[RMDB]
RNA sequence: GGGAACGACUCGAGUAGAGUCGAAAAACACUUAGUUCGCUAAGUGUACUUAGGGGUCGUUCGUUGAUGACCCUGAACUACAGCUGAAGCCUCCACGGCUGCAGGCAAGACGGUCAGCGACGGAGGCACCCACCAGUUUCGUCGUUCGCGACGAAAACCUUCGUCAGUUGUUCGCAACUGACGAAGGAAAAGAAACAACAACAACAAC
Reactivity to 2A3 in 0.01 (KOAc 150mM, MgCl2 10mM, bicine 150mM(pH8.5), 24C), signal-to-noise 2, nucleotides 027 to 156: a000c000a000c000u000u000a000g040u080u060c270g040c170u020a000a000g000u010g000u010a030c070u020u240a080g000g000g020g020u010c010g070u120u000c080g070u090u260g040a040u060g030a010c040c000c000u020g000a030a050c030u100a100c020a040g030c040u100g070a080a000g000c000c000u040c070c050a060c080g110g010c000u010g000c030a070g120g040c040a030a050g140a100c100g060g050u180c010a000g020c010g080a080c110g020g000a000g040g020c000a060c010c000c000a040c020c020a070g040u000u040u020c010g000u000c000g010u000u100c210g010c020g070a000c020g000a000a000a000a020